Structure probing data (DMS and 2A3) for a 177-nucleotide construct. It was measured as part of the RMDB library OK2TST. The reactions ran in a buffer of 150 mM KOAc, 10 mM MgCl2 and 150 mM bicine (pH 8.5), at 24 C.
[RMDB]
RNA sequence: GGGAACGACUCGAGUAGAGUCGAAAAGUAUGCGUCGUUCAGCACCAAGCCGGGCUGGGGCACCCUGGACCUGUAUGUCGAUACCGAGCUGAGCGUAUCGACCCAGCCGCCGCCGGAGGGUCUGAUAGGCUAAAUUACGGUUCGCCGUAAUUUAGCCAAAAGAAACAACAACAACAAC
Reactivity to DMS in 0.01 (KOAc 150mM, MgCl2 10mM, bicine 150mM(pH8.5), 24C), signal-to-noise 1, nucleotides 027 to 126: g020u000a040u000g010c100g000u000c070g080u000u000c070a060g020c120a080c070c030a070a100g040c090c000g000g000g010c020u020g040g010g020g040c120a110c100c060c070u000g010g000a040c110c050u000g010u000a080u020g040u010c000g020a000u020a030c030c030g000a170g030c140u010g000a090g020c200g030u000a020u020c020g000a050c010c100c040a070g000c040c010g060c040c050g010c060c000g000g020a130g020g010g020u000c020u010g000a050u000a170
Reactivity to 2A3 in 0.01 (KOAc 150mM, MgCl2 10mM, bicine 150mM(pH8.5), 24C), signal-to-noise 1, nucleotides 027 to 126: g110u090a040u270g090c010g100u030c030g020u070u130c000a000g050c050a030c030c020a060a040g020c000c000g060g010g050c030u120g010g030g090g060c000a040c040c040c010u030g030g050a090c000c050u010g060u270a150u260g000u030c000g010a020u010a010c050c000g000a050g090c140u090g150a010g040c100g010u000a000u000c000g000a010c060c020c000a000g030c000c020g060c020c030g050c000c000g010g040a040g030g000g000u010c000u010g020a100u080a110